An RNA of 177 nucleotides, treated with 2A3 and DMS and read out base by base.
[RMDB]
RNA sequence: GGGAACGACUCGAGUAGAGUCGAAAACGCCUUAUCCGGUAACUAUCGUCUUGAGUCCAACCCGGUAAAGUAGGACAGGUGCCGGCAGCGCUCUGGGUCAUUUUCGGCGAGGACCGCUUUCGCUGGAUCAUAACUAUGUCUUCGGACAUAGUUAUGAAAAAGAAACAACAACAACAAC
Reactivity to 2A3 in 0.01 (KOAc 150mM, MgCl2 10mM, bicine 150mM(pH8.5), 24C), signal-to-noise 6, nucleotides 027 to 126: c050g040c010c000u110u120a140u070c030c020g000g030u050a060a060c060u050a100u160c030g090u010c070u060u120g060a040g040u020c010c020a030a030c050c020c000g020g010u110a110a080a020g080u090a050g030g040a030c030a030g050g010u030g040c020c000g070g010c030a010g040c010g020c020u020c010u050g080g010g020u010c020a050u050u050u050u130c040g020g010c020g010a020g010g000a040c020c030g040c000u040u110u060c060g000c010u020g020g020a030
Reactivity to DMS in 0.01 (KOAc 150mM, MgCl2 10mM, bicine 150mM(pH8.5), 24C), signal-to-noise 8, nucleotides 027 to 126: c220g010c020c030u000u010a110u010c070c050g000g010u000a060a080c090u010a070u010c060g010u000c030u000u000g020a110g000u000c020c030a060a300c190c030c020g000g010u010a040a050a080g020u000a080g010g000a060c060a070g010g010u000g010c030c020g010g010c130a040g000c040g020c080u000c030u000g000g000g010u020c030a080u010u000u010u000c060g010g000c030g020a230g010g000a080c060c060g020c090u000u000u000c060g010c020u000g000g010a220
Values are in units of 0.01, from 0 to 300, in steps of 10.
For 2A3, 13,377 sequencing reads were counted.
For DMS the reverse transcriptase was MarathonRT.
For 2A3 the reverse transcriptase was SuperScript II with manganese.
It was measured as part of the RMDB library OK2TRN.
For DMS, 13,940 sequencing reads were counted.
The reactions ran in a buffer of 150 mM KOAc, 10 mM MgCl2 and 150 mM bicine (pH 8.5), at 24 C.